[RMDB]
RNA sequence: GGGAACGACUCGAGUAGAGUCGAAAAGAUAUGGACCGUCAAAGCGGUCAAUGACGUAGCAUCGGAAACGAUGCUAUAAGACAGACCCUUUGAGCGGUCCUAAGUCAAACGCGCCUUCGGGCGCGAAGUUUUAUGAAUCCUUCGGGAUUCAUAAAACAAAAGAAACAACAACAACAAC
Reactivity to DMS in 0.01 (KOAc 150mM, MgCl2 10mM, bicine 150mM(pH8.5), 24C), signal-to-noise 2, nucleotides 027 to 126: g030a120u010a300u010g050g000a000c010c020g020u010c030a010a000a040g000c300g040g000u010c010a100a110u000g000a120c300g000u010a000g000c000a030u000c000g000g010a120a100a190c000g020a050u010g000c000u000a010u000a080a140g010a150c240a170g000a030c010c010c000u000u010u000g010a130g030c000g040g000u010c010c000u000a000a070g020u030c100a080a050a200c000g020c010g020c030c000u030u000c180g050g000g000c010g010c000g030a010a030
Reactivity to 2A3 in 0.01 (KOAc 150mM, MgCl2 10mM, bicine 150mM(pH8.5), 24C), signal-to-noise 2, nucleotides 027 to 126: g060a000u070a070u240g030g010a010c010c010g030u010c000a040a010a020g140c280g100g000u000c020a030a230u140g040a040c050g040u020a000g020c000a000u020c030g020g000a090a040a060c000g010a000u000g000c000u000a000u000a000a010g040a030c040a000g140a050c000c000c020u000u030u030g130a130g070c030g000g000u000c000c000u010a000a000g000u000c010a080a030a030c000g010c000g000c000c000u140u160c300g120g000g020c000g040c000g000a010a010